[RMDB]
RNA sequence: GGGAACGACUCGAGUAGAGUCGAAAACGGGGGACCACCAGGUUGCCUAAGGAGGGGUGAACCGGCCCAGGUCGGAAACGGAGCAGGUCAAAACUCCCGUGCUGAUCAGUAGUGGGAUCGCGCCUGUGAAUAGCCACUGCACUCCAGCCUGGGCAACGACAUAGUCUUGGUUCGCCAAGACUAUGUCAAAAGAAACAACAACAACAAC
Reactivity to 2A3 in 0.01 (KOAc 150mM, MgCl2 10mM, bicine 150mM(pH8.5), 24C), signal-to-noise 2, nucleotides 027 to 156: c010g000g040g020g010g020a010c000c000a020c000c030a060g090g000u020u020g030c000c020u050a080a050g070g000a030g000g050g000g000u010g040a040a060c010c060g020g040c000c040c010a000g000g050u070c000g010g030a130a090a000c050g020g000a000g030c040a000g060g000u070c020a000a010a020a210c060u010c000c010c000g000u010g000c020u060g050a180u130c070a030g030u060a030g110u050g020g040g000a030u060c020g000c010g050c040c000u000g020u020g050a120a120u190a060g020c010c000a040c040u060g000c000a030c030u000c000c010a020g030c000c000u000g000g000g000c010a000a010c030

Overview
Chemical mapping of a 207-nucleotide RNA with 2A3. It was measured as part of the RMDB library ARCHII. The 2A3 profile rests on 1,262 reads. Conditions: 150 mM KOAc, 10 mM MgCl2 and 150 mM bicine (pH 8.5), 24 C.